The data come from the RNA Mapping Database (RMDB), library OK3TST. An RNA of 207 nucleotides, treated with 2A3 and read out base by base. Values cover nucleotides 27 to 156.
RNA sequence: GGGAACGACUCGAGUAGAGUCGAAAAACUCUUUGAGUAAAAUGUUCUAUAUACGUCAACAGGUAAAGCUUGUUAACUGUAUUGUUCAAAUCUUCUAUAUCCUUACUGAUAUUUUUCUGCUUUAUUGAGUGAGCUUUCAACCACUGAGGCGUGUUAACUAACGGAUCUCUUUCGAGAGAUCCGUUAGAAAAGAAACAACAACAACAAC
Reactivity to 2A3 in 0.01 (KOAc 150mM, MgCl2 10mM, bicine 150mM(pH8.5), 24C), signal-to-noise 1, nucleotides 027 to 156: a020c050u100c100u100u060u130g020a050g000u080a040a180a120a120u180g000u010u000c030u030a110u020a000u040a200c010g000u040c020a090a050c010a040g000g040u030a040a000a070g050c000u110u010g130u280u160a120a090c010u120g040u000a080u020u100g000u020u010c010a030a080a300u000c010u120u000c050u150a070u010a060u100c060c040u090u180a090c010u040g040a040u010a030u030u080u000u000u130c070u040g000c030u050u070u030a060u090u110g020a030g040u040g000a000g020c030u030u040u070c070a070a080c010c070a090c130u040g000a010g000g070c000g030u020g000u010u080a020a070
For 2A3 the reverse transcriptase was SuperScript II with manganese.